[RMDB]
RNA sequence: GGGAACGACUCGAGUAGAGUCGAAAAGAUAUGGAUGACUCUUUUGACGGCUACUAUUCGGAAACGAAUACUAGCCGAUAAGAGUAUCCUAAGUCAAAACACGCUGGCGGUUCGCCGCCAGCGUGAACAGUUAUUAACCGUUCGCGGUUAAUAACUGAAAAGAAACAACAACAACAAC
Reactivity to 2A3 in 0.01 (KOAc 150mM, MgCl2 10mM, bicine 150mM(pH8.5), 24C), signal-to-noise 1, nucleotides 027 to 126: g030a020u010a010u080g000g020a010u070g230a120c000u010c000u030u030u100u230g300a200c180g000g000c000u000a000c000u000a000u010u000c000g000g060a070a040a040c010g030a000a020u000a020c030u010a020g030c000c010g000a000u000a000a000g010a010g000u010a000u000c000c030u000a030a020g050u080c030a000a010a150a160c000a000c030g000c050u010g000g020c000g010g200u060u140c300g050c050c010g030c020c000a050g000c010g000u000g000a010a020
Reactivity to DMS in 0.01 (KOAc 150mM, MgCl2 10mM, bicine 150mM(pH8.5), 24C), signal-to-noise 1, nucleotides 027 to 126: g000a010u010a150u020g000g000a010u000g010a040c000u010c000u010u000u000u000g040a130c140g010g010c000u000a000c120u000a000u000u000c010g030g000a040a040a070c000g010a020a020u000a010c080u000a000g010c010c000g020a020u000a000a010g010a010g020u010a000u000c010c010u000a030a140g000u000c020a110a080a160a270c010a000c000g020c000u000g010g020c000g000g000u000u010c250g010c000c000g010c000c000a010g030c010g000u000g000a010a080